RNA sequence: GGGAACGACUCGAGUAGAGUCGAAAACUGGUAAAAAAUAACAGAAUACAUAUAAAAGGCUCAGAAGACUGCUUGGCACAUUAAGUGAUCAAUAAUGUUAGUUCACGUUCUUAUUUUAACAUUAAGCAUGCUUUGACAAGUCAGGACUUGCGUAAAAUAUCGAGGAUUUAUUCGUAAAUCCUCGAUAAAAAGAAACAACAACAACAAC
Reactivity to 2A3 in 0.01 (KOAc 150mM, MgCl2 10mM, bicine 150mM(pH8.5), 24C), signal-to-noise 2, nucleotides 027 to 156: c000u030g040g000u040a060a080a040a120a050a120u140a090a090c060a080g080a150a100u150a190c050a020u270a030u120a250a130a060a050g100g000c030u060c090a090g050a150a000g030a100c020u030g000c020u040u040g000g000c030a020c000a060u120u100a070a070g000u040g050a030u010c010a000a060u100a060a040u050g010u030u100a030g050u030u050c050a010c070g010u130u060c010u070u040a120u130u210u000u030a040a010c030a020u020u020a010a010g000c010a010u110g000c010u120u010u000g010a000c000a020a020g030u040c030a000g050g050a150c000u030u030g020c030g020u000a000a000a020a140
Reactivity to DMS in 0.01 (KOAc 150mM, MgCl2 10mM, bicine 150mM(pH8.5), 24C), signal-to-noise 2, nucleotides 027 to 156: c080u000g000g030u000a000a000a070a150a060a110u010a060a140c030a140g000a210a070u000a130c020a060u000a130u010a090a050a170a070g030g020c040u000c080a170g000a080a090g000a100c060u010g030c020u000u000g000g000c000a090c100a090u010u030a040a100g020u010g000a120u000c020a130a110u000a030a050u030g000u000u000a050g020u020u000c060a030c040g020u000u000c030u020u020a200u020u000u020u020a030a090c030a060u000u000a040a150g010c030a050u000g020c090u000u010u000g020a090c040a070a050g020u000c010a050g000g020a130c090u000u010g030c030g010u010a120a060a040a130